Conditions: 150 mM KOAc, 10 mM MgCl2 and 150 mM bicine (pH 8.5), 24 C.
This 177-nucleotide RNA was probed chemically with DMS and 2A3.
It was measured as part of the RMDB library M2PK90.
For DMS, 915 sequencing reads were counted.
RNA sequence: GGGAACGACUCGAGUAGAGUCGAAAAGUUAUGGAAAACGUCUUAGCUACCACUACAACAACAAUGCUGGACGGUGAUGGUUCGAGUUACUCGAAACCAUCACGUAGUGGUAGUCGUUCCCAUUCAACUAAGCACGGUCAUUCGUGACCGUGCUUAGAAAAGAAACAACAACAACAAC
Reactivity to DMS in 0.01 (KOAc 150mM, MgCl2 10mM, bicine 150mM(pH8.5), 24C), signal-to-noise 1, nucleotides 027 to 126: g000u000u020a120u000g000g000a030a130a070a040c010g010u020c020u000u010a200g010c010u000a000c010c010a050c000u010a000c020a060a100c100a020a140c250a090a070u000g010c110u000g000g000a020c050g000g000u010g000a020u000g000g010u000u010c000g000a020g000u030u010a060c040u010c000g000a030a020a010c000c000a000u000c000a000c040g020u000a020g020u010g000g000u000a000g000u000c010g020u000u010c020c000c000a160u040u020c060a090a110
Reactivity to 2A3 in 0.01 (KOAc 150mM, MgCl2 10mM, bicine 150mM(pH8.5), 24C), signal-to-noise 2, nucleotides 027 to 126: g030u070u090a080u220g150g020a030a110a000a040c020g010u020c020u090u090a040g000c000u000a000c000c000a000c010u000a010c010a120a010c010a010a030c020a070a290u160g040c090u120g110g030a050c050g010g020u010g000a010u000g000g020u000u000c000g000a010g030u190u120a180c040u020c000g020a080a070a060c000c000a000u000c010a010c000g000u000a000g020u000g000g010u010a000g000u000c010g010u000u010c030c030c000a010u120u180c020a030a040